Chemical mapping of a 207-nucleotide RNA with 2A3. The reactions ran in a buffer of 150 mM KOAc, 10 mM MgCl2 and 150 mM bicine (pH 8.5), at 24 C. For 2A3 the reverse transcriptase was SuperScript II with manganese. Reactivities are rounded to 0.1 and cut off at 0 and 3.
[RMDB]
RNA sequence: GGGAACGACUCGAGUAGAGUCGAAAAGUCUCCUAGAGAGCUUGUCCGUCGGGCCUUACACCCCGACUUGCUGAGUUUCUCUAGGAGAGUCCCUUUCCCAGCCAGAGGUGGCUGGUCAAACAAUACCAAAACUCUUGCUAGUUCGCUAGCAAGAGAAGUCUACAUUCGAGUUCGCUCGAAUGUAGACAAAAGAAACAACAACAACAAC
Reactivity to 2A3 in 0.01 (KOAc 150mM, MgCl2 10mM, bicine 150mM(pH8.5), 24C), signal-to-noise 1, nucleotides 027 to 156: g040u000c000u000c000c000u000a000g000a000g000a010g020c000u010u030g000u080c020c010g000u030c030g030g000g020c030c030u200u150a110c090a040c050c010c000c010g000a000c030u020u150g000c040u050g020a010g000u210u300u050c000u010c000u000a000g000g000a000g000a000g000u000c000c000c000u040u070u000c060c000c000a000g010c000c000a010g020a000g020g040u000g000g010c000u060g010g050u170c050a000a000a020c060a090a040u000a000c000c000a020a020a080a190c000u000c000u000u000g000c000u010a000g020u070u020c110g020c070u000a010g000c000a000a000g000a000g000a010a000
It was measured as part of the RMDB library M2RFPK.